[RMDB]
RNA sequence: GGGAACGACUCGAGUAGAGUCGAAAAGUUCAUCCCCUGAUCAAGGAUGCCCGAAACGGUGAGGCGGAAAGCAAAUUAAAUCACGUCAACCCAUCGGGACGGUUGGCCAGUUAAGAAGUGAGGAUUCAAAAGAUCGAACCGUUCGCGGUUCGAUCAACCAUAGACCACUCUUCGGAGUGGUCUAUGGAAAAGAAACAACAACAACAAC
Reactivity to 2A3 in 0.01 (KOAc 150mM, MgCl2 10mM, bicine 150mM(pH8.5), 24C), signal-to-noise 2, nucleotides 027 to 156: g050u090u080c020a040u020c010c000c010c000u070g030a110u020c000a020a020g080g000a090u130g060c000c000c000g040a050a040a010c060g010g030u050g050a100g010g000c020g030g120a120a060a010g060c190a270a000a000u120u150a050a060a040u100c080a090c200g000u040c000a020a020c000c000c000a070u000c000g000g000g000a000c000g050g050u000u000g000g080c030c050a050g000u040u060a090a010g050a060a010g040u110g170a040g110g020a080u090u040c030a040a040a010a040g000a000u000c030g000a000a010c010c000g030u010u040c290g030c050g040g000u000u000c000g000a000u000c000a000a000
The record gives the reactivity of an RNA of 207 nucleotides to 2A3. The 2A3 profile rests on 984 reads. For 2A3 the reverse transcriptase was SuperScript II with manganese. Reactivities are given for positions 27 through 156.